[RMDB]
RNA sequence: GGGAACGACUCGAGUAGAGUCGAAAAAGAAUUGCUUGUCGGUGUGGAAGAAAACACAUGCACACAUGUUGAAUUGGGUGCAGAAGAUUUUGUAAUUCCAUUUUUCAGGUAGAAAAUAUGCAACAGAGAACUAAGACUUGUUCGCAAGUCUUAGUUCAAAAGAAACAACAACAACAAC
Reactivity to DMS in 0.01 (KOAc 150mM, MgCl2 10mM, bicine 150mM(pH8.5), 24C), signal-to-noise 4, nucleotides 027 to 126: a070g000a070a030u010u000g000c020u010u000g020u000c010g010g040u000g010u000g000g000a100a090g010a140a090a060a040c020a030c060a130u000g000c000a020c010a020c010a020u000g000u000u020g020a200a110u010u000g000g000g000u010g000c010a040g000a130a090g000a070u000u020u000u010g000u000a030a070u000u000c010c060a080u010u000u000u000u000c020a090g010g010u010a090g000a060a030a050a080u000a050u010g010c130a070a060c110a090g010a240
Reactivity to 2A3 in 0.01 (KOAc 150mM, MgCl2 10mM, bicine 150mM(pH8.5), 24C), signal-to-noise 2, nucleotides 027 to 126: a000g010a010a030u020u020g000c020u050u030g010u040c020g000g000u010g000u040g050g070a260a090g040a140a160a010a020c010a000c010a030u030g020c020a000c000a010c000a020u040g060u100u140g220a290a130u090u040g030g000g000u020g010c000a010g030a140a020g000a000u260u300u010u030g010u010a000a020u020u020c020c000a020u000u000u050u080u050c020a020g010g150u100a050g170a030a080a010a010u240a090u160g050c010a050a040c030a010g130a000